[RMDB]
RNA sequence: GGGAACGACUCGAGUAGAGUCGAAAAUAUGAACUCCGCAAUUAUCCGUUCUUGACCGAUCUUCCGGGGUCGUUCGACAUCGGAGCCACGACGUACACAACGUCGAUGCGGGCGGCGAACGUGACCAGUGAGUACGGAAUCUUCACAGGUGGGUGGGGAGAGCACACUUAUUCGUAAGUGUGCUCUCAAAAGAAACAACAACAACAAC
Reactivity to 2A3 in 0.01 (KOAc 150mM, MgCl2 10mM, bicine 150mM(pH8.5), 24C), signal-to-noise 2, nucleotides 027 to 156: u160a050u090g000a000a060c000u000c000c000g000c090a010a170u120u070a020u160c010c010g000u000u050c000u090u120g050a100c000c010g060a100u050c030u140u050c020c090g060g000g000g020u000c000g000u050u070c100g030a020c000a040u100c070g050g020a020g060c040c020a000c000g050a000c000g010u230a080c120a020c000a180a030c000g000u000c000g000a020u090g060c000g000g010g000c030g010g000c000g010a050a020c030g110u120g020a050c000c000a030g030u000g170a010g030u060a030c060g040g000a000a030u020c040u140u090c030a030c000a040g110g000u060g000g000g090u160g000g000g000
The record gives the reactivity of an RNA of 207 nucleotides to 2A3. The 2A3 profile rests on 757 reads. The reactions ran in a buffer of 150 mM KOAc, 10 mM MgCl2 and 150 mM bicine (pH 8.5), at 24 C.